The record gives the reactivity of an RNA of 207 nucleotides to 2A3.
RNA sequence: GGGAACGACUCGAGUAGAGUCGAAAAAGUUUGUAUAAGCACUGUUUAAAUUUCCCAGUGCAUGCCAAUUGGUGUUUACAGACGAGUAUGGUAUUGACCAUAUGAUACUAUUCUCUCUCUCAGGAGAGGAGAAUAGAUAACUACAAAGGAAAUACAAGUGGUCGUAAUGAUUCGUCAUUACGACCACAAAAGAAACAACAACAACAAC
Reactivity to 2A3 in 0.01 (KOAc 150mM, MgCl2 10mM, bicine 150mM(pH8.5), 24C), signal-to-noise 1, nucleotides 027 to 156: a000g030u040u030u020g080u030a040u010a200a090g010c000a000c000u000g170u160u190u170a030a020a060u060u120u090c000c020c000a000g050u000g000c000a010u040g000c000c040a300a300u080u300g000g010u030g040u090u040u060a000c020a030g000a000c000g030a010g020u030a010u030g000g040u070a090u260u300g150a040c020c000a000u010a000u070g000a010u000a060c010u010a000u000u010c000u000c000u000c000u000c000u000c080a150g150g000a050g030a000g130g030a030g000a000a000u000a000g000a030u150a100a030c050u140a020c070a070a020a050g040g000a030a050a000u090a060c070a170a000

Reactivities are given for positions 27 through 156. 2A3 adducts were read by reverse transcription with SuperScript II with manganese.